[RMDB]
RNA sequence: GGGAACGACUCGAGUAGAGUCGAAAAUUGGGAUUCGUCCCAACACUGACCGUAGGGAGACCUACCCACCUUCCUACAGCUCCGGUGAUUCGAAAGAGUCACGGGAGCUGUAGGAAGAGGGUCUCCCUAAACGGGAUACGGCUAAUUCGUUAGCCAAUUCAUAGUAGUUUUUCGAAACUACUAUGAAAAAAGAAACAACAACAACAAC
Reactivity to 2A3 in 0.01 (KOAc 150mM, MgCl2 10mM, bicine 150mM(pH8.5), 24C), signal-to-noise 2, nucleotides 027 to 156: u030u010g020g000g020a030u060u040c180g080u040c120c020c040a040a000c140a050c070u180g150a100c020c030g000u030a010g000g000g000a020g000a010c000c010u120a190c100c010c000a040c010c000u000u000c000c000u030a000c010a000g000c010u010c000c000g170g010u010g000a000u010u010c000g050a170a120a090g010a030g030u000c010a000c030g020g000g000a000g000c000u000g010u000a000g000g010a000a000g000a000g000g000g000u010c000u000c010c000c000u000a010a000a000c000g000g000g020a040u120a130c160g000g020c000u040a050a050u120u160c210g080u080u030a000g000c010c000a000a050
Reactivity to DMS in 0.01 (KOAc 150mM, MgCl2 10mM, bicine 150mM(pH8.5), 24C), signal-to-noise 1, nucleotides 027 to 156: u010u020g010g000g040a050u000u010c300g040u000c000c010c020a020a040c050a080c090u010g010a040c000c000g040u010a050g000g020g020a040g010a030c010c010u010a050c030c000c000a300c120c000u000u010c000c000u000a030c000a030g020c000u000c010c000g000g020u000g000a020u010u010c000g010a180a060a230g000a040g040u000c010a010c010g000g000g000a010g060c000u000g010u000a000g000g000a000a010g000a060g000g000g020u000c000u010c010c020c010u010a000a000a020c040g020g000g040a140u010a080c050g010g020c020u000a040a110u000u010c170g030u020u000a000g000c000c000a060a250